Structure probing data (DMS and 2A3) for a 177-nucleotide construct. It was measured as part of the RMDB library OK2TST. Values are in units of 0.01, from 0 to 300, in steps of 10. The reactions ran in a buffer of 150 mM KOAc, 10 mM MgCl2 and 150 mM bicine (pH 8.5), at 24 C.

RNA sequence: GGGAACGACUCGAGUAGAGUCGAAAACGUGAAUGCCCCGGCAAACAGGAAGCAGGCCGCAUAGCCAAAAUGUUGAGCAACAACGCCGCCGAUAACGCCUGCCAGAAUGACGAUUGCCGCGUCAGUAACUUUAAGUAAGAUUCGUCUUACUUAAAGUAAAAGAAACAACAACAACAAC
Reactivity to DMS in 0.01 (KOAc 150mM, MgCl2 10mM, bicine 150mM(pH8.5), 24C), signal-to-noise 9, nucleotides 027 to 126: c110g020u010g010a110a120u000g010c030c010c040c040g010g010c030a030a050a160c080a060g010g000a220a140g010c030a030g010g020c020c060g010c280a050u010a130g010c060c070a060a050a090a090u010g010u000u000g010a120g010c160a090a100c050a050a050c070g000c120c100g010c040c030g000a050u010a050a300c250g000c020c010u000g010c010c060a060g000a260a090u000g000a070c110g000a120u000u000g000c020c030g020c140g000u000c050a060g010u010a080
Reactivity to 2A3 in 0.01 (KOAc 150mM, MgCl2 10mM, bicine 150mM(pH8.5), 24C), signal-to-noise 9, nucleotides 027 to 126: c050g090u110g140a200a060u120g030c010c000c010c000g000g000c030a040a300a300c020a050g030g020a030a010g010c010a010g010g010c020c010g010c050a050u070a030g010c030c020a030a070a060a090u170g020u050u050g060a110g090c060a030a120c000a010a030c070g020c040c020g010c010c030g030a020u030a050a000c030g000c000c000u000g000c000c000a060g080a100a070u040g010a030c050g090a100u010u050g000c010c000g010c020g050u040c020a050g030u040a030